Source: RMDB library OK2TST, as collected in RNAgym. An RNA of 177 nucleotides, treated with DMS and 2A3 and read out base by base. For 2A3 the reverse transcriptase was SuperScript II with manganese.
RNA sequence: GGGAACGACUCGAGUAGAGUCGAAAAUGGAUGAGCUUUGUGCGAUUAGGAGCGAUUCUAGAAUAACAAUGAUUAUUGGUCAUGAGCCAACAAUGUCGAUGGCUGCGCAAUGGCUUUCUUCUCCUGAGGGAUAUAUGGCAUUCGUGCCAUAUAUCCCAAAAGAAACAACAACAACAAC
Reactivity to DMS in 0.01 (KOAc 150mM, MgCl2 10mM, bicine 150mM(pH8.5), 24C), signal-to-noise 2, nucleotides 027 to 126: u000g030g000a020u000g000a150g020c010u020u000u000g040u020g020c040g000a120u000u000a060g000g010a000g010c300g010a190u000u000c020u000a050g030a120a070u030a080a080c090a070a060u000g000a080u000u000a050u000u000g030g000u010c030a120u010g010a140g020c000c020a090a040c110a050a050u010g010u010c070g000a140u000g000g000c020u000g000c070g000c040a010a010u000g020g000c010u000u000u000c070u000u000c040u000c040c030u010g000a210
Reactivity to 2A3 in 0.01 (KOAc 150mM, MgCl2 10mM, bicine 150mM(pH8.5), 24C), signal-to-noise 1, nucleotides 027 to 126: u180g030g000a020u020g030a050g040c000u080u050u100g030u060g050c060g040a070u000u110a020g040g000a010g040c020g050a000u030u000c000u060a060g060a120a090u200a080a010c110a060a090u120g000a080u090u100a040u090u130g050g040u000c050a080u130g020a010g000c000c030a050a030c000a010a180u190g040u110c040g050a070u040g120g000c030u050g030c000g000c010a010a040u100g020g000c030u030u050u000c020u090u030c100u020c010c020u030g030a060